[RMDB]
RNA sequence: GGGAACGACUCGAGUAGAGUCGAAAAACGGGCACGUUCGCGUGCCCGUAAUGAACGCUGCAACGCGCAGAGAUCUCGCGAGAGCGCGAAUGCACAUAGAAACAUUUCCAGUUUUCGAACUGGAAAACCACAAACUGAGAUUCGUCUCAGUUUGUGGAAAAGAAACAACAACAACAAC
Reactivity to 2A3 in 0.01 (KOAc 150mM, MgCl2 10mM, bicine 150mM(pH8.5), 24C), signal-to-noise 2, nucleotides 027 to 126: a000c020g020g000g000c040a010c020g060u100u120c220g000c030g060u000g000c000c020c000g000u000a010a020u020g040a060a030c100g040c190u000g000c010a060a030c020g000c010g020c010a000g020a010g030a150u090c060u040c080g050c090g060a070g000a010g040c020g000c000g030a040a060u060g000c000a010c020a050u210a070g220a030a140a010c030a000u000u000u010c000c000a010g000u020u000u030u040c140g040a020a000c000u020g000g000a010a000a000a010
Reactivity to DMS in 0.01 (KOAc 150mM, MgCl2 10mM, bicine 150mM(pH8.5), 24C), signal-to-noise 2, nucleotides 027 to 126: a030c010g030g000g000c000a010c010g010u000u000c170g050c010g030u010g000c010c000c000g000u000a000a020u000g000a110a130c160g010c140u000g010c010a050a280c020g020c010g020c060a120g000a220g000a060u000c050u040c180g010c100g000a130g020a100g010c010g010c020g030a090a020u000g020c020a100c070a150u030a120g000a090a070a100c170a100u000u000u000c000c000a010g000u000u000u000u000c190g000a010a010c000u000g000g000a000a000a010a090